[RMDB]
RNA sequence: GGGAACGACUCGAGUAGAGUCGAAAAGAUAUGGACCCAUACAGGACAUGCUCUGUCUCGGAAACGAGACUGAGCAACAGCCUGAUGGGUCCUAAGUCAAAUCGUGAGCCGUUCGCGGCUCACGAAACCCAAAUGAAUGGUUCGCCAUUCAUUUGGGAAAAGAAACAACAACAACAAC
Reactivity to DMS in 0.01 (KOAc 150mM, MgCl2 10mM, bicine 150mM(pH8.5), 24C), signal-to-noise 2, nucleotides 027 to 126: g000a020u000a080u010g000g000a000c010c000c000a000u010a160c010a010g010g010a030c140a070u030g020c000u000c000u000g000u000c000u000c000g020g020a020a020a060c000g000a010g000a030c000u000g000a010g040c000a030a020c180a230g000c020c010u000g030a030u000g020g000g030u000c000c010u000a000a070g000u000c010a080a110a180u000c010g000u000g000a020g020c000c000g010u000u030c270g000c000g010g010c000u020c000a000c000g020a000a050a110
Reactivity to 2A3 in 0.01 (KOAc 150mM, MgCl2 10mM, bicine 150mM(pH8.5), 24C), signal-to-noise 1, nucleotides 027 to 126: g000a010u010a010u080g000g000a000c030c000c020a020u170a230c040a020g000g040a030c100a300u130g010c000u000c010u020g000u000c000u000c010g010g000a030a010a000c000g010a000g020a000c000u000g000a000g000c020a010a010c040a000g020c000c000u000g000a010u010g000g020g000u010c010c000u000a000a010g000u000c020a040a010a130u060c010g020u000g020a010g000c000c000g010u050u080c250g030c030g200g010c010u010c010a010c010g000a010a000a000
This 177-nucleotide RNA was probed chemically with DMS and 2A3. The RNA was probed in 150 mM KOAc, 10 mM MgCl2 and 150 mM bicine (pH 8.5) at 24 C. It was measured as part of the RMDB library TTRDES.